The data come from the RNA Mapping Database (RMDB), library ARCHII. An RNA of 207 nucleotides, treated with DMS and 2A3 and read out base by base. The reactions ran in a buffer of 150 mM KOAc, 10 mM MgCl2 and 150 mM bicine (pH 8.5), at 24 C. For 2A3 the reverse transcriptase was SuperScript II with manganese.
[RMDB]
RNA sequence: GGGAACGACUCGAGUAGAGUCGAAAAGAUCCGCGACGAGAGACGCCCCCGCGACAUCAUCAAAUUGCGGGGACUCCCUAAAGCUGUGUGCUACUAAGCAGGUGCCGAAACGACCUGUGGCCGGGGUAAUGACCUGGGGUAUAGUAAAAACGCACCACUAAUGUUAUUUGUUCGCAAAUAACAUUAGAAAAGAAACAACAACAACAAC
Reactivity to DMS in 0.01 (KOAc 150mM, MgCl2 10mM, bicine 150mM(pH8.5), 24C), signal-to-noise 2, nucleotides 027 to 156: g000a120u000c030c010g050c080g040a150c060g020a250g010a080g000a070c110g060c010c020c010c020c020g020c020g020a070c000a150u010c080a220u000c180a060a130a110u010u000g010c000g020g010g000g030a030c010u000c000c000c000u000a090a100a150g020c050u000g000u000g030u010g000c020u000a110c060u010a090a260g010c000a080g010g010u010g010c060c030g030a080a110a270c140g010a070c010c010u000g010u000g020g030c000c010g000g020g010g000u000a060a150u010g000a090c000c000u000g050g000g000g000u000a060u010a090g010u010a070a060a030a070a040c060g010c010a030c010c020a220
Reactivity to 2A3 in 0.01 (KOAc 150mM, MgCl2 10mM, bicine 150mM(pH8.5), 24C), signal-to-noise 3, nucleotides 027 to 156: g060a090u050c040c030g010c030g090a110c070g020a020g020a020g010a120c030g090c000c000c000c010c020g010c010g030a030c020a100u210c000a010u020c020a080a100a100u100u080g000c010g000g000g000g000a010c010u000c010c000c000u090a120a100a020g040c060u060g060u030g010u010g190c000u000a020c010u040a000a010g000c000a000g020g010u070g130c050c080g170a180a110a050c050g050a030c010c000u000g020u030g020g010c010c000g000g000g000g010u070a050a160u110g020a040c000c010u110g030g000g010g020u080a110u050a300g000u000a000a000a000a000a060c010g000c000a010c010c000a000
For 2A3, 2,066 sequencing reads were counted.